[RMDB]
Annotation
Conditions: 150 mM KOAc, 10 mM MgCl2 and 150 mM bicine (pH 8.5), 24 C. Structure probing data (DMS and 2A3) for a 177-nucleotide construct. Source: RMDB library TTRDEL, as collected in RNAgym.

RNA sequence: GGGAACGACUCGAGUAGAGUCGAAAAGAUAUGGAUUUGGACAUGCCAUCCAUCGGAAACGAUGGGUUGGCAACAGCCAACUGUCCUAAGUCAAACUUGCAAUAAGGGUUCGCCCUUAUUGCAAGAACUUAGCAAAUGACUUCGGUCAUUUGCUAAGAAAAGAAACAACAACAACAAC
Reactivity to DMS in 0.01 (KOAc 150mM, MgCl2 10mM, bicine 150mM(pH8.5), 24C), signal-to-noise 4, nucleotides 027 to 126: g010a050u000a300u000g000g000a040u000u000u000g010g020a080c090a240u000g000c000c010a020u010c000c000a000u000c000g000g000a100a100a120c010g020a010u000g000g010g030u000u000g010g010c000a010a010c250a100g000c010c010a020a040c300u010g010u000c010c000u010a030a070g000u000c040a100a060a210c010u000u000g000c000a020a010u010a020a010g010g010g020u000u010c300g010c000c000c000u000u000a000u000u000g000c000a000a000g000a040a120
Reactivity to 2A3 in 0.01 (KOAc 150mM, MgCl2 10mM, bicine 150mM(pH8.5), 24C), signal-to-noise 3, nucleotides 027 to 126: g060a010u080a040u220g060g000a040u040u060u030g010g000a030c070a130u090g000c020c000a000u000c000c000a020u000c010g040g060a050a050a030c010g000a020u010g030g000g040u070u170g000g000c000a020a000c030a010g070c010c000a060a010c120u140g050u040c010c020u050a190a020g080u060c060a070a050a140c030u000u000g000c000a020a000u010a010a010g020g010g030u090u140c220g180c010c000c010u030u000a000u000u000g000c000a000a000g000a000a000